[RMDB]
RNA sequence: GGGAACGACUCGAGUAGAGUCGAAAAAGGCAGCUUCCCGGCUUUUAAGCUACGGACGAUGCAAACGAAGCAGGCAUCGAAUUUUCGGCCCUUCGAAAAGCUGAGAUGAGCUCAGCAAGGGAAUCAAAUACAACUCUUACUUCGGUAAGAGUUGUAUAAAAGAAACAACAACAACAAC
Reactivity to 2A3 in 0.01 (KOAc 150mM, MgCl2 10mM, bicine 150mM(pH8.5), 24C), signal-to-noise 1, nucleotides 027 to 126: a000g040g000c040a000g010c030u020u020c000c010c000g010g030c000u040u100u010u280a070a050g000c000u050a040c060g010g070a010c010g020a030u050g010c010a050a130a110c030g100a040a000g030c180a050g140g010c030a040u040c040g050a110a110u120u050u060u000c000g020g010c010c000c010u030u050c020g050a090a120a050a020g000c000u010g010a010g000a070u150g120a020g090c000u000c000a000g000c020a020a020g000g000g000a040a080u100c070a000a150
Reactivity to DMS in 0.01 (KOAc 150mM, MgCl2 10mM, bicine 150mM(pH8.5), 24C), signal-to-noise 2, nucleotides 027 to 126: a060g010g010c030a040g000c080u010u000c000c010c010g000g000c000u010u000u010u010a100a090g010c030u000a060c110g030g020a090c050g000a020u010g010c000a050a060a170c060g000a030a070g020c130a080g000g020c020a040u010c020g010a090a150u000u000u010u000c010g010g000c020c010c010u000u000c060g020a080a040a130a060g000c000u010g010a030g010a290u010g020a130g000c020u010c000a010g010c010a080a030g000g000g000a040a100u010c140a070a070
Structure probing data (2A3 and DMS) for a 177-nucleotide construct. The reactions ran in a buffer of 150 mM KOAc, 10 mM MgCl2 and 150 mM bicine (pH 8.5), at 24 C. 2A3 adducts were read by reverse transcription with SuperScript II with manganese. The DMS profile rests on 2,005 reads.